The record gives the reactivity of an RNA of 177 nucleotides to 2A3 and DMS. For DMS, 2,310 sequencing reads were counted. For 2A3, 1,882 sequencing reads were counted. Conditions: 150 mM KOAc, 10 mM MgCl2 and 150 mM bicine (pH 8.5), 24 C. The data come from the RNA Mapping Database (RMDB), library OK2TRN.
RNA sequence: GGGAACGACUCGAGUAGAGUCGAAAAAGCCAACUGUGCAUUCUAGGUUUACAUCCUUAUAUAUAUGCCAAGUCCUAGUGAUAAGGCGUUCUGUAAGGUCUCCAUACCAGAUUGAUGGAGGAAGUAGCUCCACAAGGAGAUUCGUCUCCUUGUGGAGAAAAGAAACAACAACAACAAC
Reactivity to 2A3 in 0.01 (KOAc 150mM, MgCl2 10mM, bicine 150mM(pH8.5), 24C), signal-to-noise 2, nucleotides 027 to 126: a000g100c030c010a030a070c070u080g000u120g090c030a030u090u020c020u070a060g120g010u070u090u050a040c010a060u080c000c000u030u000a020u000a010u000a010u060a010u090g010c020c000a000a020g030u020c020c000u150a040g030u050g300a010u010a050a000g000g000c000g000u020u000c020u010g030u010a000a000g010g020u010c000u000c000c000a020u010a200c030c050a130g090a300u120u250g040a030u070g010g020a020g010g020a040a040g060u090a020g030
Reactivity to DMS in 0.01 (KOAc 150mM, MgCl2 10mM, bicine 150mM(pH8.5), 24C), signal-to-noise 3, nucleotides 027 to 126: a090g010c020c020a090a130c170u000g020u000g030c050a110u000u010c020u000a090g010g010u000u000u000a080c100a160u000c000c000u000u000a030u000a040u020a080u020a020u010g020c010c000a040a300g000u000c000c010u010a160g000u010g000a020u020a020a300g000g010c000g010u000u010c080u010g010u000a030a000g010g000u000c000u000c010c050a040u000a100c050c120a060g000a090u000u000g000a030u000g000g000a040g010g000a080a100g010u010a100g000